Conditions: 150 mM KOAc, 10 mM MgCl2 and 150 mM bicine (pH 8.5), 24 C. Chemical mapping of a 207-nucleotide RNA with 2A3. The data come from the RNA Mapping Database (RMDB), library RNAMAK.
[RMDB]
RNA sequence: GGGAACGACUCGAGUAGAGUCGAAAAACCUUUGUGGUAUCCUCGCCCUUGGGAGACAUCCCUCUCCCAUUGGGAGAGAAGAUGUCUUUGAUCAAGGGAAACGGAUACCACUCUGGUAAAACGGUAUGGCAAUAGUUUCGACUAUUGCCAUACCGAAACAGUGGACAGGAUUCGUCCUGUCCACUGUAAAAGAAACAACAACAACAAC
Reactivity to 2A3 in 0.01 (KOAc 150mM, MgCl2 10mM, bicine 150mM(pH8.5), 24C), signal-to-noise 1, nucleotides 027 to 156: a000c000c000u000u010u000g000u000g000g000u000a000u000c000c000u000c070g120c010c000c020u020u010g020g020g000a010g000a000c000a000u000c020c030c020u050c010u000c000c050c050a240u220u300g010g010g010a010g010a010g000a010a020g000a000u000g010u000c040u000u040u010g110a090u050c000a000a010g000g000g080a060a060a000c080g020g000a000u000a000c020c000a000c000u000c000u000g010g020u040a040a020a020a060c020g000g000u020a090u000g010g020c000a000a000u000a000g010u050u130u160c260g030a010c000u000a010u000u000g000c000c000a000u000a000c010c000g000a000a000